[RMDB]
RNA sequence: GGGAACGACUCGAGUAGAGUCGAAAAGAGCAACUUAGGAUUUUAGGCACCCCGGUGCGUCUCGAACCGCGCCGGGCCAAACCCACAGGGGCUGGCGGUCCUGUGCGGUCAAAAUCUUUCCGCUGGAAUACCUAUCCCAGUUUCGACUGGGAUAGAAGAACUGUAUCAAGUUCGCUUGAUACAGUUCAAAAGAAACAACAACAACAAC
Reactivity to 2A3 in 0.01 (KOAc 150mM, MgCl2 10mM, bicine 150mM(pH8.5), 24C), signal-to-noise 2, nucleotides 027 to 156: g070a010g020c050a030a100c070u090u110a100g040g050a100u090u090u060u140a060g040g010c030a110c000c050c000c000g000g010u010g020c000g040u030c110u090c230g080a090a040c060c020g000c010g000c020c020g000g010g000c010c000a030a010a010c000c000c000a000c010a000g000g000g000g020c000u010g010g010c000g020g010u020c000c000u000g000u010g040c240g000g030u050c030a040a070a020a050u040c000u100u140u040c010c000g000c010u020g000g050a110a070u100a160c000c000u000a000u000c000c000c000a010g000u040u060u110c190g070a020c010u000g000g000g010a000u000a000g000a010a000
Reactivity to DMS in 0.01 (KOAc 150mM, MgCl2 10mM, bicine 150mM(pH8.5), 24C), signal-to-noise 2, nucleotides 027 to 156: g000a140g000c040a040a080c080u000u000a110g020g010a130u000u000u000u000a130g020g010c050a140c190c020c000c020g050g020u000g050c010g020u020c090u000c210g020a120a110c170c000g020c010g020c000c020g030g010g030c050c030a060a080a070c000c000c000a100c040a090g020g000g010g010c030u010g000g020c010g020g000u000c030c010u020g000u000g000c080g030g020u000c060a030a060a040a040u000c040u000u000u010c030c000g030c000u000g020g000a220a090u020a080c060c000u000a000u010c000c000c000a020g000u000u000u010c280g000a060c000u000g000g000g010a000u000a040g000a020a140